This 170-nucleotide RNA was probed chemically with DMS and 2A3. The reactions ran in a buffer of 150 mM KOAc, 10 mM MgCl2 and 150 mM bicine (pH 8.5), at 24 C. For 2A3 the reverse transcriptase was SuperScript II with manganese. DMS adducts were read by reverse transcription with MarathonRT.
RNA sequence: GGGAACGACUCGAGUAGAGUCGAAAAACGAAGGCUUCAUCACAUUAAAGAACAAUCUAUAUAGAUUGGUUUGGCAUGUUGAGCGUAAAGACGUUCCAUAUCCUAAGCAAUCUAUUUUUACUAUUAAGACGAGGUAUGUUCGCAUACCUCAAAAGAAACAACAACAACAAC
Reactivity to DMS in 0.01 (KOAc 150mM, MgCl2 10mM, bicine 150mM(pH8.5), 24C), signal-to-noise 7, nucleotides 027 to 129: a010c010g020a070a030g040g020c000u010u010c080a080u040c040a020c070a070u000u000a090a110a030g020a060a080c110a060a040u040c100u000a070u040a060u000a020g000a020u040u010g020g020u000u000u000g000g000c300a030u020g000u000u020g000a000g030c000g030u040a050a070a070g070a110c020g020u000u000c000c000a030u010a020u040c060c020u000a000a000g020c030a000a000u020c020u030a030u000u000u000u000u000a080c110u030a070u010u000a080a090g000a070c200
Reactivity to 2A3 in 0.01 (KOAc 150mM, MgCl2 10mM, bicine 150mM(pH8.5), 24C), signal-to-noise 9, nucleotides 027 to 129: a000c040g020a030a000g050g000c010u070u040c030a050u050c020a020c010a100u110u160a130a040a020g060a040a020c020a040a050u060c040u060a100u010a010u030a170g010a010u000u040g060g100u100u000u020g010g000c070a000u000g010u020u040g010a010g000c000g000u050a060a150a090g280a050c000g010u000u000c010c000a000u020a030u030c000c000u010a000a000g020c010a000a000u000c010u000a040u020u040u020u030u070a080c060u050a080u260u070a090a030g090a050c100